RNA sequence: GGGAACGACUCGAGUAGAGUCGAAAAUGCCAGGUGUGAUCUAGCUUGGCCUCUAGGGCGGACGCAUCCCAUCCAAAGGCAUCAUUGCUGUAGGUCAGGGUGAGUCCAGACAGGUAAUCACUCAACCAUAUCGGCAUAGGUUCGCCUAUGCCGAUAUAAAAGAAACAACAACAACAAC
Reactivity to DMS in 0.01 (KOAc 150mM, MgCl2 10mM, bicine 150mM(pH8.5), 24C), signal-to-noise 3, nucleotides 027 to 126: u060g000c080c020a130g000g010u020g010u030g010a000u000c110u040a120g020c010u000u000g010g040c000c020u010c080u020a210g020g010g000c020g000g050a080c000g000c090a050u010c010c000c030a290u000c030c030a020a120a300g000g000c010a060u040c300a150u080u000g000c000u000g000u000a260g000g020u000c230a210g000g000g000u000g010a110g000u020c000c020a030g000a120c060a130g010g000u000a070a060u020c020a060c000u010c020a130a120c150c100
Reactivity to 2A3 in 0.01 (KOAc 150mM, MgCl2 10mM, bicine 150mM(pH8.5), 24C), signal-to-noise 3, nucleotides 027 to 126: u090g030c000c040a030g070g000u040g010u030g050a090u050c050u070a040g070c010u050u050g060g020c000c010u060c060u120a200g090g030g010c040g000g000a000c000g010c010a030u050c000c000c000a040u050c030c000a130a120a060g010g000c000a070u140c040a090u150u300g020c050u100g050u150a020g020g020u030c170a100g000g000g030u010g000a000g040u010c000c000a000g040a010c010a000g010g030u020a010a010u050c050a030c040u060c030a020a070c050c060

The data come from the RNA Mapping Database (RMDB), library OK1LIB. Chemical mapping of a 177-nucleotide RNA with DMS and 2A3. For DMS, 2,349 sequencing reads were counted. Conditions: 150 mM KOAc, 10 mM MgCl2 and 150 mM bicine (pH 8.5), 24 C. For 2A3, 2,783 sequencing reads were counted.